Chemical mapping of a 177-nucleotide RNA with 2A3 and DMS. Conditions: 150 mM KOAc, 10 mM MgCl2 and 150 mM bicine (pH 8.5), 24 C. The DMS profile rests on 1,054 reads. It was measured as part of the RMDB library M2PK50.
RNA sequence: GGGAACGACUCGAGUAGAGUCGAAAAGCACUGGCGUUCGCGCCAGUGCAAAGAACGCGACGGCCACCGAAAUAAAACGGUGAAGAACGCGACAAGCCGUUAAAACGUCGAACUUCGGUUCGACGAACUUACACAACAGCUUCGGCUGUUGUGUAAGAAAAGAAACAACAACAACAAC
Reactivity to 2A3 in 0.01 (KOAc 150mM, MgCl2 10mM, bicine 150mM(pH8.5), 24C), signal-to-noise 2, nucleotides 027 to 126: g010c010a000c010u010g030g020c000g040u070u140c250g030c000g020c100c010a020g000u000g010c000a020a000a000g020a080a020c040g000c030g040a050c060g010g040c050c010a000c000c000g150a080a130a020u300a020a100a040a010c020g020g010u080g000a000a000g070a110a050c070g010c000g080a020c050a040a020g010c000c000g050u040u080a050a110a050a060c010g000u010c000g000a000a000c000u100u060c190g080g000u010u000c010g010a000c000g000a000a000
Reactivity to DMS in 0.01 (KOAc 150mM, MgCl2 10mM, bicine 150mM(pH8.5), 24C), signal-to-noise 2, nucleotides 027 to 126: g040c000a000c000u000g010g000c040g080u020u010c260g030c020g030c040c000a010g000u000g000c060a010a050a120g000a130a090c020g010c020g000a040c050g000g000c070c020a000c000c010g000a120a090a110u010a040a080a100a100c010g010g020u020g000a120a190g020a080a100c070g000c020g000a130c120a040a130g010c010c010g000u000u040a040a070a070a130c040g010u000c000g010a000a020c000u000u010c210g000g050u000u000c000g000a010c000g000a030a040